[RMDB]
RNA sequence: GGGAACGACUCGAGUAGAGUCGAAAAGGGUUUUCGAACCCGCUUCCGCGUACUACGCUGACAGCAAUGACGGGACGGAACUACUUAUAUCCCAAAUAGGAUAUAAGCCGUCCUAAGACAGCUGGAGGCGUAUCGCUCAAUUAGCGUUCGCGCUAAACGAAUUGCGAUUUUUCGAAAUCGCAAUUCGAAAAGAAACAACAACAACAAC
Reactivity to 2A3 in 0.01 (KOAc 150mM, MgCl2 10mM, bicine 150mM(pH8.5), 24C), signal-to-noise 2, nucleotides 027 to 156: g000g000g000u040u030u040u080c180g070a040a000c020c000c000g010c050u020u000c010c010g000c000g010u050a100c080u010a000c030g010c000u030g010a030c010a000g000c030a100a300u120g030a040c060g010g000g000a000c000g030g000a010a070c040u160a010c000u190u000a000u010a000u000c010c010c090a040a300a150u100a100g000g000a000u000a000u010a000a000g020c000c000g000u010c040c000u000a010a000g000a010c000a070g190c030u000g000g000a020g010g000c000g000u000a020u090c000g000c000u100c050a060a300u050u040a020g000c020g040u070u070c240g000c020g000c140u110a030a080a070
Reactivity to DMS in 0.01 (KOAc 150mM, MgCl2 10mM, bicine 150mM(pH8.5), 24C), signal-to-noise 1, nucleotides 027 to 156: g050g060g000u010u000u000u010c260g050a050a080c020c000c000g000c100u000u000c020c020g020c030g020u000a050c140u000a050c010g020c010u000g030a300c060a040g040c000a270a080u000g020a130c220g000g010g010a030c010g000g000a090a170c040u000a300c020u000u000a040u000a060u000c020c000c080a080a140a240u000a060g010g010a070u000a000u000a020a000g040c000c060g040u000c000c000u000a000a040g020a200c030a020g030c000u000g000g040a300g000g020c010g010u000a000u000c030g100c000u010c060a110a180u000u000a020g000c000g010u000u000c290g000c040g090c010u000a080a080a230

An RNA of 207 nucleotides, treated with 2A3 and DMS and read out base by base. It was measured as part of the RMDB library RNAMAK. Reactivities are rounded to 0.1 and cut off at 0 and 3. For DMS the reverse transcriptase was MarathonRT.